RNA sequence: GGGAACGACUCGAGUAGAGUCGAAAACGAAAUCCUUGAAACCCUUGACUUCGAUCGGGUUUCCGCUGGGAUCAAAGAAGAACAUCGUACGCUGCUCGCCAGGCAGCCCUUCGAAGCGCACAACGGGGGUAGUAGUAGCUUUCGAGCUACUACUACCAAAAGAAACAACAACAACAAC
Reactivity to 2A3 in 0.01 (KOAc 150mM, MgCl2 10mM, bicine 150mM(pH8.5), 24C), signal-to-noise 4, nucleotides 027 to 126: c070g030a050a060a030u070c020c020u050u080g070a070a040a030c010c000c000u050u200g070a090c020u080u050c130g130a170u070c050g050g000g000u000u000u020c020c020g070c090u100g010g040g000a020u130c090a080a090a090g100a080a020g050a070a060c030a120u110c070g090u110a050c070g020c030u060g000c010u030c040g090c030c000a020g040g000c010a000g000c000c010c000u020u030c010g050a040a020g000c030g020c040a040c020a060a120c090g040g000g000
Reactivity to DMS in 0.01 (KOAc 150mM, MgCl2 10mM, bicine 150mM(pH8.5), 24C), signal-to-noise 3, nucleotides 027 to 126: c070g000a040a110a060u010c030c000u000u050g020a060a040a070c000c030c010u010u030g020a080c010u050u070c160g030a160u040c120g030g000g000u000u000u000c040c300g020c160u050g000g010g000a060u010c120a100a120a110g000a070a080g010a180a100c120a010u040c010g000u010a040c150g000c010u020g020c020u000c000g000c100c050a010g010g000c040a110g000c020c090c050u060u000c030g000a070a070g000c120g010c060a060c040a040a110c140g000g000g000